[RMDB]
RNA sequence: GGGAACGACUCGAGUAGAGUCGAAAAAGCUGUCCGACUACGUCCAGUUGGCUCAUUGUUCUUCCUGAAUCGACCUCACGAGAAAAGAGCAUUCGAUUCGUUAGCUGGAAGUGGUUUUGAUAAUGGACCUCGCACUAGUAUUCGUACUAGUGCGAGGAAAAGAAACAACAACAACAAC
Reactivity to DMS in 0.01 (KOAc 150mM, MgCl2 10mM, bicine 150mM(pH8.5), 24C), signal-to-noise 3, nucleotides 027 to 126: a070g000c100u010g000u000c000c130g020a030c010u010a010c010g000u000c010c020a030g020u000u000g000g000c030u010c100a090u010u010g010u000u020c110u000u000c050c040u000g010a030a020u000c040g010a060c300c010u010c050a090c120g020a150g000a100a090a080a060g000a020g010c060a130u010u000c030g010a030u000u010c030g000u010u000a020g010c010u000g020g010a040a020g030u000g000g000u000u000u010u010g010a090u000a070a120u000g000g000a300
Reactivity to 2A3 in 0.01 (KOAc 150mM, MgCl2 10mM, bicine 150mM(pH8.5), 24C), signal-to-noise 2, nucleotides 027 to 126: a020g160c110u090g010u000c010c020g010a000c000u020a000c010g040u000c000c000a000g020u030u020g020g000c010u020c090a150u060u140g040u110u040c040u060u020c020c000u030g070a090a100u050c010g050a060c030c030u100c030a060c090g150a120g160a100a160a030a030g020a020g000c020a060u000u060c050g030a030u130u010c030g040u030u020a020g030c020u010g000g020a020a000g010u000g030g070u050u050u070u140g090a100u060a180a080u100g050g010a030

This 177-nucleotide RNA was probed chemically with DMS and 2A3. Values cover nucleotides 27 to 126. 2A3 adducts were read by reverse transcription with SuperScript II with manganese. In probing experiments dimethyl sulfate is read out at A N1 and C N3, which are open when not base-paired. The RNA was probed in 150 mM KOAc, 10 mM MgCl2 and 150 mM bicine (pH 8.5) at 24 C.